[RMDB]
RNA sequence: GGGAACGACUCGAGUAGAGUCGAAAAUCGAAGGCUAUUCUGCUACUCCCAGGAUAGUGAAAGAGAAGCUGGUGUGCCACGCCAUCAUCGGGGCACAGAAGGGGAAGAGCUUGGUGAUGGCUGUGAAGUAAGAGGGGUAGUUCGCUACCCCUCUUACAAAAGAAACAACAACAACAAC
Reactivity to 2A3 in 0.01 (KOAc 150mM, MgCl2 10mM, bicine 150mM(pH8.5), 24C), signal-to-noise 2, nucleotides 027 to 126: u060c010g020a060a020g140g000c000u010a030u030u020c010u030g070c030u070a110c040u130c040c010c000a000g010g000a010u030a030g040u070g100a180a040a020g060a000g030a040a000g000c070u040g070g000u090g020u050g050c010c010a020c030g000c000c010a000u010c000a000u000c040g070g000g050g040c040a020c020a080g180a100a070g000g070g000g010a050a050g040a030g070c030u090u080g000g030u020g000a010u010g020g000c080u070g030u030g030a120a070
Reactivity to DMS in 0.01 (KOAc 150mM, MgCl2 10mM, bicine 150mM(pH8.5), 24C), signal-to-noise 2, nucleotides 027 to 126: u000c060g020a200a130g010g010c000u000a050u000u000c020u000g030c090u010a120c140u000c100c170c000a030g000g020a000u000a030g010u000g000a060a080a130g010a130g000a080a060g020c080u010g030g000u000g010u000g020c040c020a100c070g020c020c010a000u000c040a010u010c020g020g000g000g010c050a060c090a080g010a100a100g010g000g020g030a130a150g000a100g020c040u000u000g030g030u000g000a030u000g000g000c020u000g000u000g000a080a090

Chemical mapping of a 177-nucleotide RNA with 2A3 and DMS. DMS adducts were read by reverse transcription with MarathonRT. It was measured as part of the RMDB library OK2TRN.